This 177-nucleotide RNA was probed chemically with DMS and 2A3. In probing experiments dimethyl sulfate is read out at A N1 and C N3, which are open when not base-paired. The 2A3 profile rests on 10,565 reads. The RNA was probed in 150 mM KOAc, 10 mM MgCl2 and 150 mM bicine (pH 8.5) at 24 C.
RNA sequence: GGGAACGACUCGAGUAGAGUCGAAAAGAGAGUAUCCGGCGCGUGACGCUGAUCAUGGCCGAGAUCACGCGCGCGAGCGAGCAGCAGACGAGCGGCAUCGUCGAGAUCGAUCGCGCGAUCACGCAGAUAAAUUUACUAAUUUCGAUUAGUAAAUUUAAAAAGAAACAACAACAACAAC
Reactivity to DMS in 0.01 (KOAc 150mM, MgCl2 10mM, bicine 150mM(pH8.5), 24C), signal-to-noise 9, nucleotides 027 to 126: g010a140g010a160g020u010a070u000c040c030g010g010c050g000c010g030u000g010a120c070g020c160u010g010a070u000c010a050u000g010g010c020c020g010a120g000a010u000c050a050c070g010c020g010c000g010c010g000a040g010c000g010a020g010c050a140g030c130a280g010a020c010g000a040g010c120g010g010c170a130u000c000g000u000c000g010a190g000a070u000c000g000a040u000c010g000c010g000c000g000a080u000c050a050c080g000c080a140g000a190
Reactivity to 2A3 in 0.01 (KOAc 150mM, MgCl2 10mM, bicine 150mM(pH8.5), 24C), signal-to-noise 5, nucleotides 027 to 126: g100a000g030a010g020u090a020u040c020c000g030g020c190g030c000g100u000g010a020c040g060c300u130g050a180u030c000a010u050g040g000c030c020g080a090g000a100u030c010a010c020g050c000g000c000g000c000g010a010g010c000g000a010g010c040a020g010c030a030g000a010c010g010a010g050c150g130g060c110a120u020c010g000u000c010g010a030g010a060u020c010g000a010u010c000g000c010g000c000g010a000u030c010a010c060g030c020a010g020a140